[RMDB]
RNA sequence: GGGAACGACUCGAGUAGAGUCGAAAAGGGAAUGGUGGUUUACCCCGUUAUCAAAUGAUUACCGACCAAUAAUUGGGGAAACUCGUUUCGCGUUGGCUGCCUAAUUCAAGGAAUUAGCGUGCCUUCAAAGACAUCAAGAAGUUCGCUUCUUGAUGAACAUGAAGGAGUAGUUCGCUACUCCUUCAUGAAAAGAAACAACAACAACAAC
Reactivity to DMS in 0.01 (KOAc 150mM, MgCl2 10mM, bicine 150mM(pH8.5), 24C), signal-to-noise 3, nucleotides 027 to 156: g020g020g010a030a010u000g020g010u010g020g010u000u000u000a150c010c010c000c010g000u010u000a050u000c050a090a080a130u010g020a190u000u000a190c050c040g020a100c070c050a100a090u020a020a060u020u010g010g000g000g030a120a040a030c040u000c050g010u000u000u000c020g030c070g010u000u010g000g000c020u000g000c130c000u000a010a020u000u000c020a150a190g030g010a080a050u000u000a000g000c070g020u000g000c000c010u000u000c010a110a060a130g010a150c000a020u000c000a010a010g020a020a050g010u010u000c300g020c010u000u000c010u000u000g020a010u000g000a020a190
Reactivity to 2A3 in 0.01 (KOAc 150mM, MgCl2 10mM, bicine 150mM(pH8.5), 24C), signal-to-noise 7, nucleotides 027 to 156: g050g000g030a060a040u090g060g060u120g030g070u100u050u300a300c000c000c000c000g010u030u020a040u060c100a070a130a160u150g050a080u150u190a150c070c080g060a090c060c090a010a040u040a020a020u200u300g000g000g000g000a010a010a010c050u050c060g010u000u020u030c080g000c030g040u010u020g000g000c020u070g030c030c020u000a010a000u010u000c090a180a130g140g020a090a000u000u000a000g030c030g050u030g000c000c000u010u020c020a050a060a020g090a040c000a000u000c000a000a000g000a000a000g010u030u100c140g050c150u000u000c000u000u000g000a000u000g000a000a000